[RMDB]
RNA sequence: GGGAACGACUCGAGUAGAGUCGAAAAGAGGCCAACGGCUUCGGCCUGUUGGACACCGGCACCGGCAGCAUGGAGAAAGUCCACGUCACCAACGGCAAGCUGGACGAGGCGAUCAAUCAGGUCAACCAUGACGGCACGACCAAUAUGCUGGCCUUCGGCUGGGAACCUUAUUCGUAAGGUUCCCAGCAAAAGAAACAACAACAACAAC
Reactivity to 2A3 in 0.01 (KOAc 150mM, MgCl2 10mM, bicine 150mM(pH8.5), 24C), signal-to-noise 1, nucleotides 027 to 156: g200a040g050g060c010c010a050a020c010g010g000c000u060u050c110g040g000c000c030u020g000u000u000g030g000a100c080a060c020c000g080g000c010a010c070c020g020g000c020a000g000c000a050u050g010g000a050g020a060a040a000g060u000c000c040a120c030g020u020c000a090c170c000a200a040c070g040g000c050a020a180g080c110u100g020g010a000c010g000a020g010g050c040g060a150u070c040a040a090u150c070a110g030g020u020c000a000a050c100c000a040u150g160a100c020g030g000c110a040c270g030a040c040c000a020a000u140a010u040g040c010u000g040g090c000c000u150u150c020g050
Structure probing data (2A3) for a 207-nucleotide construct. The 2A3 profile rests on 573 reads. Conditions: 150 mM KOAc, 10 mM MgCl2 and 150 mM bicine (pH 8.5), 24 C. For 2A3 the reverse transcriptase was SuperScript II with manganese. Source: RMDB library OK3TST, as collected in RNAgym.